[RMDB]
RNA sequence: GGGAACGACUCGAGUAGAGUCGAAAAAACUCAGCUAGGGAGAGUAUAACAUUCAUGUUGACGAGACCUAGACGAAACACAGAGGAAAAUUAUUAAUCACUGGAUAGUAUUAGUAAUGCCUCUGUGUAAAACUCUUCUACGUUCGCGUAGAAGAGAACUGAGUUCAGUUGUUCGCAACUGAACUCAGAAAAGAAACAACAACAACAAC
Reactivity to 2A3 in 0.01 (KOAc 150mM, MgCl2 10mM, bicine 150mM(pH8.5), 24C), signal-to-noise 1, nucleotides 027 to 156: a000a010c030u010c020a020g000c000u010a000g020g000g010a130g010a080g050u090a080u050a270a000c020a040u100u210c040a050u270g010u000u060g030a070c070g020a010g060a060c000c000u000a020g000a030c040g000a000a010a000c000a000c000a000g000a030g040g000a000a280a250a000u000u000a000u000u000a000a000u030c070a010c010u030g140g070a160u300a300g020u000a000u000u000a000g000u000a000a000u060g100c000c000u000c000u000g000u010g000u000a000a000a000a000c000u000c000u010u000c000u000a000c010g020u010u090c260g000c000g090u000a000g000a000a000g000a010g020a010a030